This 177-nucleotide RNA was probed chemically with DMS and 2A3. For 2A3 the reverse transcriptase was SuperScript II with manganese. The reactions ran in a buffer of 150 mM KOAc, 10 mM MgCl2 and 150 mM bicine (pH 8.5), at 24 C.
[RMDB]
RNA sequence: GGGAACGACUCGAGUAGAGUCGAAAACUAAGGUACUUGAGGAACUAAGCCCCAAAGCUCCUGCUAGAUUAUUUUUGCCGUUUGUGUUGCAGAUUUGCCUUAUUCCUUAGGCUUUUCUGUGUCAAAACUUUGAAUGACAAUUCGUUGUCAUUCAAAGAAAAGAAACAACAACAACAAC
Reactivity to DMS in 0.01 (KOAc 150mM, MgCl2 10mM, bicine 150mM(pH8.5), 24C), signal-to-noise 5, nucleotides 027 to 126: c080u000a060a070g010g010u000a020c050u010u000g010a070g000g010a050a070c050u010a100a150g010c040c000c000c010a060a100a090g000c040u000c020c010u000g010c060u000a060g000a080u000u010a050u000u010u000u010u000g020c060c050g000u010u000u010g010u010g000u010u000g010c000a010g000a010u000u000u000g010c000c000u000u000a080u000u010c070c080u000u010a020g000g010c000u000u000u000u000c000u000g020u010g010u000c090a050a070a080a100
Reactivity to 2A3 in 0.01 (KOAc 150mM, MgCl2 10mM, bicine 150mM(pH8.5), 24C), signal-to-noise 2, nucleotides 027 to 126: c040u080a060a050g070g000u090a080c010u070u110g050a050g040g030a030a040c040u050a110a020g040c000c010c000c000a030a120a020g030c030u000c000c010u000g030c000u010a040g010a110u060u040a190u050u240u050u070u130g140c090c080g000u030u030u190g070u040g020u040u110g000c040a000g010a030u030u020u050g000c000c000u070u100a100u160u120c030c030u050u040a000g000g000c000u000u010u000u010c000u000g000u010g050u060c030a000a010a040a150